The record gives the reactivity of an RNA of 177 nucleotides to 2A3 and DMS.

[RMDB]
RNA sequence: GGGAACGACUCGAGUAGAGUCGAAAAGAAAAUCCCGGUCCCGUCAGACAAAUCAGUGACAUGAUGGUCAUAGCGAAAGCACUCGCACGAAAUGUCACUGAUGAAAAAGUGCGUGUGACCAAAAAAAUCAUAAUAUGACGUUCGCGUCAUAUUAUGAAAAAGAAACAACAACAACAAC
Reactivity to 2A3 in 0.01 (KOAc 150mM, MgCl2 10mM, bicine 150mM(pH8.5), 24C), signal-to-noise 3, nucleotides 027 to 126: g010a000a100a000a050u020c000c000c010g000g010u010c010c000c000g020u040c020a030g020a180c040a040a160a010u020c000a000g000u000g000a000c000a020u040g020a060u110g090g070u170c090a100u110a090g000c000g010a070a060a030g080c060a090c160u010c020g000c010a060c030g030a110a020a000u020g000u010c000a000c000u000g000a010u010g000a000a030a010a020a000g120u140g000c030g010u090g130u160g020a050c020c040a000a030a070a000a000a020a010
Reactivity to DMS in 0.01 (KOAc 150mM, MgCl2 10mM, bicine 150mM(pH8.5), 24C), signal-to-noise 4, nucleotides 027 to 126: g010a140a080a130a110u010c000c000c010g040g010u010c010c000c000g010u010c090a110g000a160c220a050a200a010u000c010a010g010u010g000a010c000a030u000g000a190u010g010g010u000c100a140u000a110g020c000g010a070a080a130g020c100a120c220u000c080g000c040a110c020g000a060a130a010u000g000u000c000a010c010u000g000a000u000g000a030a030a090a090a090g010u010g030c000g010u010g020u010g010a030c010c010a000a000a010a060a030a070a070
The RNA was probed in 150 mM KOAc, 10 mM MgCl2 and 150 mM bicine (pH 8.5) at 24 C.
For 2A3 the reverse transcriptase was SuperScript II with manganese.
The data come from the RNA Mapping Database (RMDB), library M2PK90.
For DMS the reverse transcriptase was MarathonRT.